This 177-nucleotide RNA was probed chemically with DMS and 2A3. For 2A3 the reverse transcriptase was SuperScript II with manganese. Values cover nucleotides 27 to 126. High DMS reactivity at an A or C suggests that its Watson-Crick edge is free. For DMS the reverse transcriptase was MarathonRT.
[RMDB]
RNA sequence: GGGAACGACUCGAGUAGAGUCGAAAAUCUUUCUAGCCCUAAUCGUCUCUUGGUAAACGAGCCUACCAUGUCGCCUAUGAGUGCUCCUAAGCCAGCUAUCACCCCGUAGUACGCGAUAAGUGGGUUAAAUCUAGGAAAGAUUCGUCUUUCCUAGAUUAAAAGAAACAACAACAACAAC
Reactivity to DMS in 0.01 (KOAc 150mM, MgCl2 10mM, bicine 150mM(pH8.5), 24C), signal-to-noise 9, nucleotides 027 to 126: u010c070u000u000u010c090u000a090g000c010c010c010u000a130a070u000c030g010u000c060u000c100u000u000g010g010u000a030a090a140c160g010a040g000c020c020u010a050c020c020a040u000g000u010c180g020c130c080u000a040u000g000a140g010u000g000c020u000c010c030u000a080a220g010c020c020a060g010c010u000a020u000c080a300c040c010c010c060g010u000a030g010u000a090c230g000c020g000a020u010a060a110g020u000g010g010g010u000u000a040
Reactivity to 2A3 in 0.01 (KOAc 150mM, MgCl2 10mM, bicine 150mM(pH8.5), 24C), signal-to-noise 6, nucleotides 027 to 126: u030c020u030u120u040c060u070a030g010c000c010c000u020a040a070u020c030g070u010c040u000c040u210u080g040g020u080a030a050a020c020g000a020g010c000c020u050a060c030c010a030u070g110u140c070g050c090c020u100a060u070g080a060g090u160g030c010u010c000c010u020a040a010g010c000c010a000g000c010u010a020u060c040a180c010c000c000c020g000u000a010g020u040a030c090g010c000g020a010u020a110a100g090u090g050g020g000u010u020a030